Source: RMDB library OK3TST, as collected in RNAgym.
Structure probing data (DMS and 2A3) for a 207-nucleotide construct.
The RNA was probed in 150 mM KOAc, 10 mM MgCl2 and 150 mM bicine (pH 8.5) at 24 C.
[RMDB]
RNA sequence: GGGAACGACUCGAGUAGAGUCGAAAAGAGGAAAUCCUGUCAUUUUUGACAACUUGGAUGAAAUCGGGGGACACUAUGCUAAGUGAAAUAAGCUAGGUGUAAAAGGACAAAUACUGCAUGAUCUCACUUACGGGUGGAAUCUAAAAAAGGUGAAGUAUAUACCUAGUGCAUUCGUGCACUAGGUAUAAAAAGAAACAACAACAACAAC
Reactivity to DMS in 0.01 (KOAc 150mM, MgCl2 10mM, bicine 150mM(pH8.5), 24C), signal-to-noise 2, nucleotides 027 to 156: g040a080g010g050a150a100a040u000c000c000u010g000u010c000a100u000u010u010u000u020g010a020c000a060a080c080u010u010g030g040a050u000g000a050a140a090u010c030g000g030g040g050g020a180c040a020c040u000a090u010g010c040u030a100a140g010u010g030a090a080a090u000a060a190g010c060u000a090g020g020u010g030u010a110a070a070a120g020g010a110c050a010a050a110u000a060c070u000g000c060a100u000g000a010u000c010u000c000a010c050u000u000a060c300g050g020g010u000g000g000a080a040u010c030u000a000a030a050a070a050a080g020g020u020g000a060a110g000u000a130
Reactivity to 2A3 in 0.01 (KOAc 150mM, MgCl2 10mM, bicine 150mM(pH8.5), 24C), signal-to-noise 2, nucleotides 027 to 156: g010a010g000g060a000a050a050u000c010c000u030g010u000c040a100u060u120u230u190u100g010a010c020a070a060c130u120u160g020g000a000u020g070a060a030a060u070c060g010g000g010g020g010a010c010a000c050u040a010u140g020c010u050a040a080g070u030g170a110a060a060u150a020a060g060c020u060a030g050g030u010g020u050a050a090a000a000g070g000a010c010a030a130a000u070a070c050u020g020c000a020u080g010a020u060c040u030c030a030c020u040u060a040c030g040g010g000u000g000g030a010a010u010c010u110a020a020a020a060a000a010g070g000u030g020a050a010g040u000a010
For DMS the reverse transcriptase was MarathonRT.
Values cover nucleotides 27 to 156.